[RMDB]
RNA sequence: GGGAACGACUCGAGUAGAGUCGAAAACAGCCCCCCAAGUAGCUGGGACUACAGGCGCACACCACUCCACCAGGCUAAUUUUCGUAUUUUUUGUAGAGACAGGGUAUCACCACGUUGGCCAGGCUGGCUGAUCUACGCUUUUCGAAGCGUAGAUCAGAAAAGAAACAACAACAACAAC
Reactivity to DMS in 0.01 (KOAc 150mM, MgCl2 10mM, bicine 150mM(pH8.5), 24C), signal-to-noise 1, nucleotides 027 to 126: c100a130g030c030c010c030c010c010c030a080a110g010u000a030g020c030u000g010g010g000a170c010u000a020c040a120g000g000c080g030c060a060c070a050c040c030a050c050u000c040c050a020c060c050a100g000g020c080u010a010a050u010u000u000u010c110g030u000a000u000u000u010u010u000u000g020u000a080g010a060g020a050c040a050g000g000g030u000a020u000c040a050c030c010a010c120g040u010u000g010g000c030c040a010g030g000c090u010g010g000

Structure probing data (DMS) for a 177-nucleotide construct. The data come from the RNA Mapping Database (RMDB), library OK2TRN.